[RMDB]
RNA sequence: GGGAACGACUCGAGUAGAGUCGAAAACAGAACUGGAUGGGCCGUGUGCUUAACCAGGACAAGAUCUCCUUCUCUCCAACGUUGGUGCCAACUCAUGAUUCUCCUAACCUGUGCUUGGAGAGACGUGCUACCAUAUAGGUGUUCGCACCUAUAUGAAGUAAUUAACACCUUUCGAGGUGUUAAUUACAAAAGAAACAACAACAACAAC
Reactivity to DMS in 0.01 (KOAc 150mM, MgCl2 10mM, bicine 150mM(pH8.5), 24C), signal-to-noise 4, nucleotides 027 to 156: c070a130g000a090a160c010u000g020g000a190u000g000g020g020c000c050g010u000g020u020g050c020u000u000a040a120c010c010a050g000g000a180c070a100a100g010a100u000c030u010c020c040u000u000c010u000c010u000c000c000a040a060c060g030u000u000g020g030u000g020c050c050a050a090c060u000c080a100u010g010a120u010u010c020u000c020c020u000a120a060c030c040u010g030u000g010c100u010u000g020g000a040g010a020g010a030c080g030u000g020c030u000a190c090c000a020u000a010u000a000g020g030u000g010u000u010c300g030c020a030c000c000u000a010u000a010u000g000a060a150
Reactivity to 2A3 in 0.01 (KOAc 150mM, MgCl2 10mM, bicine 150mM(pH8.5), 24C), signal-to-noise 6, nucleotides 027 to 156: c050a030g070a070a020c010u000g020g000a060u050g060g040g010c070c080g300u260g110u290g140c000u030u030a090a070c000c000a000g000g060a020c080a040a090g030a110u030c030u020c030c010u030u020c000u000c000u000c000c000a010a010c020g060u060u060g000g000u030g050c040c050a130a110c130u100c100a130u130g100a230u300u080c120u120c100c050u070a040a060c000c010u050g050u090g070c100u010u000g000g000a000g010a000g000a000c020g030u090g070c030u100a100c030c000a000u000a000u000a000g000g000u010g040u010u060c210g020c070a000c000c000u000a000u000a000u010g000a010a010

Background
This 207-nucleotide RNA was probed chemically with DMS and 2A3. DMS adducts were read by reverse transcription with MarathonRT. The DMS profile rests on 10,149 reads.